[RMDB]
RNA sequence: GGGAACGACUCGAGUAGAGUCGAAAAAGCCAGGCGUCGACGAAGCGCGGCGCAUCCGGAAACGGCGCGAGAAAGCGCCGGUACGCGUCGCUGCGGUACGCGCUGUUGAAGUCGCCGCAGACGAUGAUCACGAGCUAAUCUUCGGAUUAGCUCGUGAAAAAGAAACAACAACAACAAC
Reactivity to DMS in 0.01 (KOAc 150mM, MgCl2 10mM, bicine 150mM(pH8.5), 24C), signal-to-noise 1, nucleotides 027 to 126: a120g020c030c010a200g000g000c020g020u000c010g010a060c000g000a130a090g030c080g010c000g000g030c000g030c000a040u010c150c030g000g000a040a060a100c000g000g000c020g020c000g060a180g020a140a170a080g000c000g010c000c000g030g070u000a010c070g020c050g030u000c040g010c040u000g000c030g000g000u000a010c120g000c020g010c020u000g000u010u010g000a080a130g010u000c030g010c000c000g010c010a020g000a170c030g020a040u000g000a210